[RMDB]
RNA sequence: GGGAACGACUCGAGUAGAGUCGAAAACAUCAGCUCUCCACGGAAUCAGCAAGAGCACUACACAGUUAGCAGUCAACCCUCCUGCAUAGGUUAUGUAACACAGUCUGCAGAUAUGAUGAGCAAGAAGCUGAACACCAAGCCAUCAAUUCCAAACAUAGUGUGUUUAAGUGUUCGCACUUAAACACACAAAAGAAACAACAACAACAAC
Reactivity to 2A3 in 0.01 (KOAc 150mM, MgCl2 10mM, bicine 150mM(pH8.5), 24C), signal-to-noise 3, nucleotides 027 to 156: c030a030u080c020a020g000c000u000c000u030c010c000a020c080g050g080a060a090u070c030a000g070c000a100a030g050a010g060c070a070c050u040a030c090a010c000a060g040u090u080a010g050c020a010g070u060c010a010a210c000c000c020u030c000c010u050g010c000a060u060a080g060g010u140u050a090u090g170u140a080a000c020a000c010a100g080u040c050u020g000c000a010g000a050u140a080u080g030a010u020g000a010g010c030a040a040g000a030a030g040c020u030g040a040a010c050a010c020c020a020a020g040c020c000a000u030c000a000a040u080u030c030c020a110a050a030c040a110u040a090
Reactivity to DMS in 0.01 (KOAc 150mM, MgCl2 10mM, bicine 150mM(pH8.5), 24C), signal-to-noise 1, nucleotides 027 to 156: c040a130u020c070a080g010c030u030c010u020c030c030a270c120g020g010a130a070u030c110a080g030c040a030a050g020a130g040c060a080c060u000a070c100a080c050a060g040u000u010a130g030c030a040g000u010c000a030a080c000c020c020u000c080c070u000g010c110a180u000a080g000g000u010u000a060u000g000u000a060a140c140a050c080a140g000u010c050u000g030c010a050g000a050u000a010u000g010a080u000g030a140g030c030a090a080g040a050a090g030c040u000g030a080a100c060a100c000c050a060a130g000c000c000a010u030c020a080a080u000u000c050c050a000a110a080c070a080u010a220